RNA sequence: GGGAACGACUCGAGUAGAGUCGAAAAGGUUUCAAACUUGCAUUUAAACUACUACAAACGAAGAAAUAACAAUGAAGAUGACCAGGGAAACAUGACGUACAGUAAUGUGCGUUAGCACAUUAACUGGUUCAGGGUUUAUGUUCGCAUAAACCCUGAAAAAAGAAACAACAACAACAAC
Reactivity to 2A3 in 0.01 (KOAc 150mM, MgCl2 10mM, bicine 150mM(pH8.5), 24C), signal-to-noise 4, nucleotides 027 to 126: g050g000u040u040u150c060a040a100a120c020u030u040g040c020a080u020u000u210a230a160a030c040u080a030c040u070a070c050a140a120a090c080g090a090a100g050a080a120a030u180a090a020c110a040a160u110g040a050a040g010a050u060g020a000c000c000a000g000g050g010a020a110a000c020a040u080g040a010c050g050u140a000c010a050g010u070a030a060u040g020u010g010c000g010u020u040a010g010c020a000c020a090u030u020a110a040c000u000g000g000
Reactivity to DMS in 0.01 (KOAc 150mM, MgCl2 10mM, bicine 150mM(pH8.5), 24C), signal-to-noise 4, nucleotides 027 to 126: g020g000u010u000u000c040a090a120a110c090u000u000g020c040a040u010u010u010a090a100a100c110u020a080c070u010a060c110a050a100a130c150g000a100a050g010a040a050a050u020a070a080c120a040a040u000g000a070a040g010a100u020g020a020c040c010a040g000g000g000a040a030a040c120a030u000g010a040c090g030u010a100c000a010g000u000a040a010u000g000u000g000c010g020u000u040a070g010c040a010c050a000u000u000a080a070c010u000g010g000